[RMDB]
RNA sequence: GGGAACGACUCGAGUAGAGUCGAAAAGCCCUCUCACAGGUAUCAAGUCGUCGGAGUUCUCGUACUACGAGGCGACCGACACCAGCUUCCUGGCAGGAGGCAUGUCAGCCCCAGGCAUCAACGAGGCCAUCGCCACAGGGAUCAACGUGGGCGGGGAAAUCACCUCCAGUUUCGACUGGAGGUGAUUAAAAGAAACAACAACAACAAC
Reactivity to 2A3 in 0.01 (KOAc 150mM, MgCl2 10mM, bicine 150mM(pH8.5), 24C), signal-to-noise 1, nucleotides 027 to 156: g000c010c010c010u010c010u000c000a030c000a010g070g060u130a100u240c010a040a000g090u110c060g030u000c010g060g000a000g010u300u080c000u000c030g110u080a280c060u130a000c110g000a000g010g000c060g090a300c000c010g000a000c000a000c010c010a010g000c000u070u000c000c030u000g000g060c030a050g070g080a050g080g040c020a020u000g040u070c060a000g030c000c000c000c000a000g000g050c050a060u090c090a150a110c100g080a190g030g020c000c000a030u130c050g010c010c000a090c020a010g000g000g020a070u140c040a070a090c120g000u030g040g020g030c000g000g020g020g060a000
Chemical mapping of a 207-nucleotide RNA with 2A3. For 2A3, 612 sequencing reads were counted. 2A3 adducts were read by reverse transcription with SuperScript II with manganese. The reactions ran in a buffer of 150 mM KOAc, 10 mM MgCl2 and 150 mM bicine (pH 8.5), at 24 C.